[RMDB]
RNA sequence: GGGAACGACUCGAGUAGAGUCGAAAAGAUAUGGAUAUGCGAAGGGAGUCGAUCGGAAACGAUACGACGAGGAUCUUCCAUAUCCUAAGUCAAAACAGCUCGUGCUCGUUCGCGAGCACGAGCUGAAGAAUACGAUUAAGUUCGCUUAAUCGUAUUCAAAAGAAACAACAACAACAAC
Reactivity to 2A3 in 0.01 (KOAc 150mM, MgCl2 10mM, bicine 150mM(pH8.5), 24C), signal-to-noise 3, nucleotides 027 to 126: g010a000u060a030u130g010g000a010u010a000u040g110c220g010a000a000g010g000g030a020g000u000c010g000a010u000c010g020g040a060a050a050c020g010a000u300a300c020g000a000c010g010a060g000g010a000u000c010u000u020c000c000a010u000a000u000c000c000u010a040a010g050u020c030a010a010a110a200c010a030g010c020u030c040g040u030g060c050u030c040g070u150u120c250g030c010g080a000g110c000a000c030g020a010g000c000u000g000a000a000
Reactivity to DMS in 0.01 (KOAc 150mM, MgCl2 10mM, bicine 150mM(pH8.5), 24C), signal-to-noise 2, nucleotides 027 to 126: g000a030u010a300u000g000g000a000u000a010u000g000c150g010a020a010g010g000g000a060g020u010c000g020a060u000c010g010g010a090a080a220c010g000a010u000a110c010g010a010c000g000a040g000g010a040u010c000u000u000c000c000a020u000a000u000c000c000u000a000a060g000u000c030a090a070a110a270c020a000g010c020u000c000g000u010g000c000u030c000g020u010u020c190g010c020g000a000g000c000a000c000g000a000g020c000u000g000a020a060

Background: Conditions: 150 mM KOAc, 10 mM MgCl2 and 150 mM bicine (pH 8.5), 24 C. An RNA of 177 nucleotides, treated with 2A3 and DMS and read out base by base. For DMS, 3,575 sequencing reads were counted.